[RMDB]
RNA sequence: GGGAACGACUCGAGUAGAGUCGAAAAGAUAUGGAUGCGUUUGACGGGGAGAUUGUCCUUCGGAAACGAAGGAAAUCGAAGAACCCGAGCAUCCUAAGUCAAAGACUAAGCCUUCGGGCUUAGUCAAGUCUCACUUUACGUUCGCGUAAAGUGAGACAAAAGAAACAACAACAACAAC
Reactivity to DMS in 0.01 (KOAc 150mM, MgCl2 10mM, bicine 150mM(pH8.5), 24C), signal-to-noise 1, nucleotides 027 to 126: g000a000u000a030u010g000g000a030u000g000c010g000u010u000u020g020a250c020g010g000g020g010a010g010a000u000u000g010u000c000c000u000u000c000g000g010a000a000a040c010g010a010a010g000g000a010a000a010u000c000g040a110a110g000a090a070c000c000c020g000a210g000c000a000u000c000c000u000a000a050g000u020c000a100a150a130g020a020c000u000a000a020g000c000c010u000u020c280g020g010g000c000u000u000a000g000u000c000a030a050
Reactivity to 2A3 in 0.01 (KOAc 150mM, MgCl2 10mM, bicine 150mM(pH8.5), 24C), signal-to-noise 2, nucleotides 027 to 126: g000a000u020a020u060g000g000a010u020g000c050g180u130u300u300g230a130c050g020g030g050g020a300g050a050u010u030g300u300c000c000u020u010c010g000g050a010a010a000c020g000a000a000g030g020a000a000a000u040c020g070a220a050g040a030a020c030c000c010g000a020g000c000a010u040c010c000u020a000a000g040u050c070a150a150a000g010a020c000u020a000a010g000c000c030u010u120c300g060g020g010c000u010u010a010g000u000c000a000a000